The record gives the reactivity of an RNA of 207 nucleotides to 2A3. Conditions: 150 mM KOAc, 10 mM MgCl2 and 150 mM bicine (pH 8.5), 24 C.
RNA sequence: GGGAACGACUCGAGUAGAGUCGAAAAUCCUAAGUCUAACGACUUUCCGAGGCGACGCAAGUGGAUUCGGAAACGAAUCCAUGAUGACCGUCGCUACCCACCGGAAAGACGUUAGAUAUGGAAAACACCAACGUAUGCGUUCGCGCAUACGUUGGUGCCGAAUAAACAGCUUCGGCUGUUUAUUCGGAAAAGAAACAACAACAACAAC
Reactivity to 2A3 in 0.01 (KOAc 150mM, MgCl2 10mM, bicine 150mM(pH8.5), 24C), signal-to-noise 1, nucleotides 027 to 156: u030c010c000u010a070a000g020u000c000u000a010a010c000g020a040c000u010u000u000c000c000g020a010g000g000c000g000a010c000g000c010a230a250g030u000g010g000a010u010u000c010g080g000a110a050a050c010g020a000a000u000c000c010a000u020g050a060u080g030a020c030c060g000u010c000g000c000u000a000c060c010c030a090c000c000g000g000a000a000a000g000a010c000g000u000u000a000g000a000u020a040u040g060g040a000a110a050a070c010a000c020c000a000a000c000g010u000a000u000g020c000g020u040u120c300g000c010g000c150a000u000a000c000g010u000u000g000g000u000g000
Notes: Values cover nucleotides 27 to 156.